[RMDB]
RNA sequence: GGGAACGACUCGAGUAGAGUCGAAAAAGAGACGGCUACCAGGUCCAAGGACAGCAGCAGGCGCGAAAAUUACCGCAGCCUGCGUUCAGGGCGGUAGUAAGGAGACGUGAAAACAAUGUGCGGGCAACUGUCACCUUUACUUCGGUAAAGGUGACAGAAAAGAAACAACAACAACAAC
Reactivity to 2A3 in 0.01 (KOAc 150mM, MgCl2 10mM, bicine 150mM(pH8.5), 24C), signal-to-noise 1, nucleotides 027 to 126: a010g090a010g040a000c020g000g000c000u040a100c000c000a090g000g090u000c000c030a010a020g090g000a080c090a020g050c000a000g000c000a000g000g000c000g000c000g140a040a070a010a050u200u180a160c030c000g010c010a040g000c000c000u030g020c000g000u050u000c010a020g000g000g000c020g000g000u000a000g070u060a030a050g030g030a040g000a030c020g000u040g100a000a010a130a000c080a060a080u110g030u010g040c020g020g030g000c050a010a110
Reactivity to DMS in 0.01 (KOAc 150mM, MgCl2 10mM, bicine 150mM(pH8.5), 24C), signal-to-noise 1, nucleotides 027 to 126: a050g000a100g010a030c170g010g000c000u040a000c100c150a100g000g020u040c080c000a130a080g030g000a000c010a080g030c270a100g020c080a040g000g000c000g040c040g110a040a020a170a190u050u050a220c170c000g000c010a010g050c020c000u000g000c050g000u040u000c000a020g050g080g000c000g000g020u000a000g000u080a090a080g000g000a120g020a050c000g090u020g000a070a040a060a010c170a010a060u050g000u000g000c000g000g000g000c130a000a080
Background
Source: RMDB library RFM100, as collected in RNAgym. Chemical mapping of a 177-nucleotide RNA with 2A3 and DMS. DMS adducts were read by reverse transcription with MarathonRT. The RNA was probed in 150 mM KOAc, 10 mM MgCl2 and 150 mM bicine (pH 8.5) at 24 C. For 2A3 the reverse transcriptase was SuperScript II with manganese. Values cover nucleotides 27 to 126. DMS (dimethyl sulfate) methylates the pairing face of unpaired adenines and cytosines.